This 207-nucleotide RNA was probed chemically with 2A3. Values cover nucleotides 27 to 156.
RNA sequence: GGGAACGACUCGAGUAGAGUCGAAAAGAUUUAAACAGAUGGAGAUACACAAAUGUUUGAAUCCCAGUAACAAAAAUCCUGGUAUCUCGGGUAUACAGUAGUGCAGAUACUGUAUUUUUAGUGCUCCUUAGGUUUUCCAUCUUCGGAUGGAAAACAACUUGUAGAGCAUCUUCGGAUGCUCUACAAGAAAAGAAACAACAACAACAAC
Reactivity to 2A3 in 0.01 (KOAc 150mM, MgCl2 10mM, bicine 150mM(pH8.5), 24C), signal-to-noise 1, nucleotides 027 to 156: g010a010u020u030u030a000a000a000c000a010g030a070u040g030g000a040g000a000u020a000c000a010c000a010a020a120u060g010u000u060u000g040a010a020u030c010c000c030a090g130u180a190a100c150a210a150a060a000a020u090c000c010u000g000g010u000a000u060c000u000c000g000g000g000u020a010u000a000c000a000g000u020a000g030u040g300c070a070g020a300u010a000c000u000g010u010a000u010u000u000u000u140a100g000u120g140c080u110c050c090u130u060a090g090g080u010u000u000u000c000c000a000u000c010u020u040c230g050g000a000u000g010g000a000a000a000a000c000a000a010
The RNA was probed in 150 mM KOAc, 10 mM MgCl2 and 150 mM bicine (pH 8.5) at 24 C. For 2A3 the reverse transcriptase was SuperScript II with manganese.